Annotation: Structure probing data (2A3) for a 207-nucleotide construct.

RNA sequence: GGGAACGACUCGAGUAGAGUCGAAAAGCUAGUCGGAGACGACUAGCAACGAUCAGUUCGCUGAUCGGAACGUGCAUUCGAAUACGCUAGAAGCACGAAUAGGCGACGCAUAGCGUACCGCAGAGGAAGCUCAUGACAUGAAUAACAAGGCGUCGCGCCAUCGCAUCCAGUUCGCUGGAUGCGAUGGAAAAGAAACAACAACAACAAC
Reactivity to 2A3 in 0.01 (KOAc 150mM, MgCl2 10mM, bicine 150mM(pH8.5), 24C), signal-to-noise 2, nucleotides 027 to 156: g000c000u000a000g000u010c000g000g000a020g010a050c000g030a000c020u000a000g010c000a000a000c000g000a000u000c000a000g010u070u090c150g030c120u000g000a010u000c000g010g070a100a030c010g010u000g020c050a300u020u010c040g010a020a030u010a020c010g000c030u030a030g000a020a000g000c010a000c020g020a020a140u100a040g090g000c000g000a000c030g010c020a020u030a040g050c010g040u030a050c000c070g020c030a000g010a000g170g020a030a030g030c040u030c190a090u180g100a100c010a070u160g110a180a090u140a140a030c040a040a120g050g000c020g000u020c000g000c000g000
The RNA was probed in 150 mM KOAc, 10 mM MgCl2 and 150 mM bicine (pH 8.5) at 24 C.